[RMDB]
RNA sequence: GGGAACGACUCGAGUAGAGUCGAAAAACUCGUGAUAGAUGCAAACGCUGCGUGCUGACCACUUGCCAGGCGGUACCUGCUUUCUCGGAUCCGAAGUGUCGAAGGGUCGGUGUGGUCUGGUCAAAACAGCGUCACUCCUAUUCGUAGGAGUGACGCUAAAAGAAACAACAACAACAAC
Reactivity to 2A3 in 0.01 (KOAc 150mM, MgCl2 10mM, bicine 150mM(pH8.5), 24C), signal-to-noise 1, nucleotides 027 to 126: a000c010u010c050g000u130g040a080u130a110g080a060u010g120c080a090a080a090c030g000c000u020g030c030g160u080g000c000u040g000a030c000c060a030c020u000u030g050c010c020a000g020g050c070g000g000u000a000c000c000u010g060c000u020u050u020c300u000c000g040g040a070u090c080c020g080a150a050g070u130g040u080c000g000a040a050g040g000g000u030c000g000g000u000g000u050g150g000u010c000u000g010g010u080c000a040a050a040a060c050